The data come from the RNA Mapping Database (RMDB), library OK1LIB.
This 177-nucleotide RNA was probed chemically with 2A3 and DMS.
DMS adducts were read by reverse transcription with MarathonRT.
The 2A3 profile rests on 1,061 reads.
For 2A3 the reverse transcriptase was SuperScript II with manganese.
The reactions ran in a buffer of 150 mM KOAc, 10 mM MgCl2 and 150 mM bicine (pH 8.5), at 24 C.
RNA sequence: GGGAACGACUCGAGUAGAGUCGAAAAUACCAGUUAUCCAGCCCGUCAAUUGAUUUAGUGGACGAAGUUCUGCUGGCCAGCUGCUUGCUUCGUAUUCGCCCAUGGAUUGUACGUCAUUUGAUGUCAAGGAUCAUGACUCAUUCGUGAGUCAUGAUCCAAAAGAAACAACAACAACAAC
Reactivity to 2A3 in 0.01 (KOAc 150mM, MgCl2 10mM, bicine 150mM(pH8.5), 24C), signal-to-noise 2, nucleotides 027 to 126: u130a010c000c000a010g140u100u030a020u030c000c000a000g000c020c020c080g050u060c100a000a200u080u170g050a050u030u150u210a080g030u020g080g010a040c010g020a090a020g060u150u000c040u080g040c020u050g000g000c000c010a060g000c000u010g010c000u090u040g010c000u060u050c000g030u050a160u020u040c030g020c000c000c000a000u020g010g040a090u070u220g090u100a020c110g020u020c040a030u000u000u300g020a070u010g040u060c040a080a160
Reactivity to DMS in 0.01 (KOAc 150mM, MgCl2 10mM, bicine 150mM(pH8.5), 24C), signal-to-noise 1, nucleotides 027 to 126: u050a020c090c000a120g000u000u030a030u030c080c050a050g030c050c070c170g040u020c020a010a020u000u050g000a190u010u010u050a090g030u000g060g020a030c000g000a080a090g000u010u000c080u020g050c030u020g010g000c110c030a080g040c020u020g000c000u020u080g000c000u000u010c060g000u000a070u010u010c100g100c030c000c000a190u020g000g010a020u020u030g090u000a030c100g050u030c000a120u000u030u020g000a040u000g000u020c160a050a110